[RMDB]
RNA sequence: GGGAACGACUCGAGUAGAGUCGAAAAAGCAACGAGUGUGUGUGGGACGUUUUAUCCCAAGCUCUGAGUAGAGCACGCGCUCACACACACCGCGAGCGAGCAUCUGCAGAGCGCAAACGCUGGUAAAAUGAUGAUGGAGAUUCGUCUCCAUCAUCAUAAAAGAAACAACAACAACAAC
Reactivity to DMS in 0.01 (KOAc 150mM, MgCl2 10mM, bicine 150mM(pH8.5), 24C), signal-to-noise 6, nucleotides 027 to 126: a080g010c040a150a050c010g010a190g020u010g010u000g010u000g020u000g000g000g000a070c010g010u010u000u020u010a120u000c040c020c030a080a100g000c000u000c010u000g010a200g020u010a060g000a010g000c010a090c130g000c060g000c000u000c000a010c000a010c010a010c010a010c010c020g010c040g000a130g000c030g000a090g010c040a070u000c040u000g000c050a120g010a110g010c110g000c070a040a060a080c080g000c010u010g000g010u000a040a050a090
Reactivity to 2A3 in 0.01 (KOAc 150mM, MgCl2 10mM, bicine 150mM(pH8.5), 24C), signal-to-noise 5, nucleotides 027 to 126: a000g080c050a040a050c020g040a140g070u010g000u000g000u000g000u000g000g010g020a040c010g000u040u050u120u230a130u090c010c010c010a030a000g000c010u000c010u110g300a220g190u300a020g130a000g010c000a010c050g010c000g020c010u010c010a000c000a000c000a000c000a000c000c000g070c020g020a020g010c030g010a000g010c010a060u050c020u120g000c030a040g020a020g120c040g000c050a060a050a060c050g000c030u030g040g080u200a110a100a030

The record gives the reactivity of an RNA of 177 nucleotides to DMS and 2A3. Reactivities are given for positions 27 through 126. The 2A3 profile rests on 6,215 reads. DMS adducts were read by reverse transcription with MarathonRT. The DMS profile rests on 9,378 reads.